[RMDB]
RNA sequence: GGGAACGACUCGAGUAGAGUCGAAAAGAAGUGGAUUGCAGAUGCUAGAUUUGGAGAGAUGCAGUUUGUGCAAAGGAGAGUCUUGAAAAGGCUUUCGAAAUGUGUCUGCCAAGGCUAAAAUAAUCACAUUUUGUAUUUGCACAGCAUUUUCAUUGUACUGAGUAGUAGGAUUCGUCCUACUACUCAGAAAAGAAACAACAACAACAAC
Reactivity to 2A3 in 0.01 (KOAc 150mM, MgCl2 10mM, bicine 150mM(pH8.5), 24C), signal-to-noise 7, nucleotides 027 to 156: g090a070a020g060u060g040g020a070u050u090g000c040a020g030a080u060g020c020u090a030g030a170u060u070u100g040g000a040g000a010g000a020u050g000c030a040g050u110u180u090g000u020g010c010a010a020a010g060g010a030g020a000g010u000c000u070u160g100a110a100a030a030g010g000c000u010u000u040c020g000a000a010a020u030g010u010g010u040c070u060g010c030c010a050a070g060g000c030u090a040a050a080a120u190a050a090u150c010a010c000a020u030u030u020u080g080u060a110u040u020u020g010c020a010c010a030g010c010a000u070u040u090u090c050a060u050u150g050u050a070
Reactivity to DMS in 0.01 (KOAc 150mM, MgCl2 10mM, bicine 150mM(pH8.5), 24C), signal-to-noise 3, nucleotides 027 to 156: g020a100a110g020u010g020g010a080u000u000g010c010a120g020a110u000g030c030u000a130g010a110u000u000u000g010g000a140g000a070g010a100u000g010c050a100g010u000u010u010g040u000g020c030a030a040a070g000g020a070g020a040g020u000c000u000u000g010a090a120a120a100g020g000c010u000u000u000c020g020a030a030a030u000g020u010g010u000c050u000g020c100c050a080a110g050g020c030u000a020a050a060a110u010a080a140u020c010a030c040a040u000u000u000u020g020u000a200u000u000u000g010c010a030c020a100g000c050a090u000u000u000u010c070a100u000u000g010u000a200